[RMDB]
Source: RMDB library OK2TRN, as collected in RNAgym. Structure probing data (DMS and 2A3) for a 177-nucleotide construct. The reactions ran in a buffer of 150 mM KOAc, 10 mM MgCl2 and 150 mM bicine (pH 8.5), at 24 C.
RNA sequence: GGGAACGACUCGAGUAGAGUCGAAAAGCGUACGCCAUGGGGCCGGUGGUGGCCGGGCAGAUCGUGCACAACCUGGGCUUCGUGCAGCUGAACCUGGGCAUGGGGCUGGUGAACGUGCUGUACGCGCCGAAGUUCUGCAAUUCGUUGCAGAACUUCGAAAAGAAACAACAACAACAAC
Reactivity to DMS in 0.01 (KOAc 150mM, MgCl2 10mM, bicine 150mM(pH8.5), 24C), signal-to-noise 2, nucleotides 027 to 126: g020c000g030u000a010c020g010c240c000a050u010g020g000g010g040c030c020g000g020u000g040g020u010g000g000c010c010g020g000g010c050a040g000a110u010c090g010u000g000c010a040c000a070a100c080c050u020g000g000g000c090u000u010c080g040u000g010c010a060g030c040u010g010a100a090c040c030u010g000g020g000c010a020u000g040g010g020g010c010u000g000g000u010g020a150a250c060g020u010g010c020u010g020u000a020c010g010c060g010c210
Reactivity to 2A3 in 0.01 (KOAc 150mM, MgCl2 10mM, bicine 150mM(pH8.5), 24C), signal-to-noise 2, nucleotides 027 to 126: g010c020g020u000a020c010g010c020c050a070u080g030g050g110g030c010c030g030g050u100g110g000u050g060g130c010c000g000g020g010c020a010g000a090u150c130g170u090g040c010a010c000a050a070c000c090u120g100g110g010c060u030u060c080g000u020g020c020a040g060c000u040g040a080a100c010c020u010g020g040g030c030a030u080g050g050g130g000c010u050g000g000u030g040a190a020c000g040u080g020c050u010g000u010a010c010g020c000g040c030